[RMDB]
An RNA of 177 nucleotides, treated with 2A3 and DMS and read out base by base. The reactions ran in a buffer of 150 mM KOAc, 10 mM MgCl2 and 150 mM bicine (pH 8.5), at 24 C. The DMS profile rests on 6,951 reads. 2A3 adducts were read by reverse transcription with SuperScript II with manganese. The data come from the RNA Mapping Database (RMDB), library TTRDEL.
RNA sequence: GGGAACGACUCGAGUAGAGUCGAAAAGAUAUGGAAUGAUGGGGAGACUAUGUAUCGGAAACGAUACCUAGUCAUCGAUCCCGCUCAUUCCUAAGUCAAAACUGAGGCACCUUCGGGUGCCUCAGAACCAAUAUGCUCAGUUCGCUGAGCAUAUUGGAAAAGAAACAACAACAACAAC
Reactivity to 2A3 in 0.01 (KOAc 150mM, MgCl2 10mM, bicine 150mM(pH8.5), 24C), signal-to-noise 3, nucleotides 027 to 126: g000a010u030a010u070g000g020a000a000u010g020a030u110g030g000g000g010a300g010a030c000u000a000u010g010u000a010u000c000g000g020a020a020a010c010g010a010u000a000c010c010u000a010g020u000c000a010u130c050g070a120u070c000c000c010g110c030u010c020a000u000u000c000c000u010a010a000g020u020c010a000a000a160a210c000u000g010a000g000g000c010a010c020c010u080u170c300g170g000g010u000g000c000c000u010c000a000g000a000a000
Reactivity to DMS in 0.01 (KOAc 150mM, MgCl2 10mM, bicine 150mM(pH8.5), 24C), signal-to-noise 5, nucleotides 027 to 126: g000a000u000a130u010g000g000a010a000u000g000a010u010g010g010g010g000a200g010a030c000u000a010u010g010u000a000u000c000g010g010a020a020a040c000g010a000u000a000c000c070u000a000g010u000c010a110u010c220g000a190u000c000c000c000g010c200u000c000a010u000u000c000c000u010a010a060g000u000c020a090a070a100a190c000u010g000a020g000g000c000a010c000c000u000u010c220g010g010g010u000g000c000c000u010c000a000g000a060a130